[RMDB]
RNA sequence: GGGAACGACUCGAGUAGAGUCGAAAAUACCAGGUCAGAGAGGUGGAUGGUCUUAAGACCCUUGAUGGCUGCUGCCAGGUCACCUUCCAGAAAUCCUGCCCCAGUUUACCCUUGGCUUUAUGGUUAACGUACACUACCGGUUCGCCGGUAGUGUACGAAAAGAAACAACAACAACAAC
Reactivity to 2A3 in 0.01 (KOAc 150mM, MgCl2 10mM, bicine 150mM(pH8.5), 24C), signal-to-noise 1, nucleotides 027 to 126: u050a000c040c000a010g000g000u020c010a050g140a000g000a010g120g040u060g030g030a030u070g010g000u020c030u150u160a200a100g060a100c000c000c000u070u230g100a090u100g070g010c000u060g030c050u110g000c040c000a020g040g030u020c010a000c000c000u010u030c020c010a020g090a080a120a030u050c000c000u030g030c000c000c000c000a010g020u010u050u050a040c000c040c000u030u050g090g010c030u140u130u090a100u170g110g000u010u130a090a030
Reactivity to DMS in 0.01 (KOAc 150mM, MgCl2 10mM, bicine 150mM(pH8.5), 24C), signal-to-noise 2, nucleotides 027 to 126: u000a140c090c020a070g010g020u000c160a080g000a160g010a050g000g020u000g010g000a050u000g010g000u000c060u040u010a090a160g010a030c020c010c120u020u010g000a110u000g030g000c020u010g000c230u010g020c030c010a040g020g010u010c020a040c010c020u010u000c030c030a090g000a040a100a120u010c010c020u000g000c060c030c030c020a060g000u000u010u000a060c060c020c040u010u010g010g020c060u020u000u000a090u010g000g010u010u000a060a140
Structure probing data (2A3 and DMS) for a 177-nucleotide construct. Reactivities are given for positions 27 through 126. It was measured as part of the RMDB library OK2TST.